[RMDB]
RNA sequence: GGGAACGACUCGAGUAGAGUCGAAAAGGCGAGCCGAUCGAUCCCCGGGAAGUCGAACCCAUGCCGGGGCCGGGCUGGACCAAGCAGCAGGCGGACAAGGUCGACUGACGGUGCAGGCCGCGCGCGACCUCAUAGGUAAUUUCGAUUACCUAUGAGGAAAAGAAACAACAACAACAAC
Reactivity to 2A3 in 0.01 (KOAc 150mM, MgCl2 10mM, bicine 150mM(pH8.5), 24C), signal-to-noise 6, nucleotides 027 to 126: g050g000c010g020a040g000c020c020g020a040u090c050g030a110u070c030c010c010c010g020g020g070a090a030g030u020c010g010a080a080c010c000c020a040u130g020c010c010g060g030g080g000c020c000g040g080g000c010u010g010g030a100c030c020a070a030g060c000a000g020c000a010g010g040c000g030g010a060c050a090a050g050g010u020c010g020a050c010u030g010a020c010g020g000u050g040c020a020g020g060c010c010g020c010g000c010g010c020g040a080
Reactivity to DMS in 0.01 (KOAc 150mM, MgCl2 10mM, bicine 150mM(pH8.5), 24C), signal-to-noise 9, nucleotides 027 to 126: g020g010c020g000a180g010c030c020g010a100u000c080g010a160u010c030c040c010c040g020g010g000a120a060g010u000c010g000a060a170c030c010c030a140u010g010c040c030g020g010g020g020c050c020g010g000g000c010u000g000g000a090c100c110a100a130g000c030a030g020c150a170g010g000c010g010g000a080c140a100a160g000g000u000c010g000a050c020u000g000a220c050g010g010u000g010c090a110g000g000c010c010g000c060g010c080g010c070g010a170
This 177-nucleotide RNA was probed chemically with 2A3 and DMS. It was measured as part of the RMDB library OK2TST. Conditions: 150 mM KOAc, 10 mM MgCl2 and 150 mM bicine (pH 8.5), 24 C. Values cover nucleotides 27 to 126.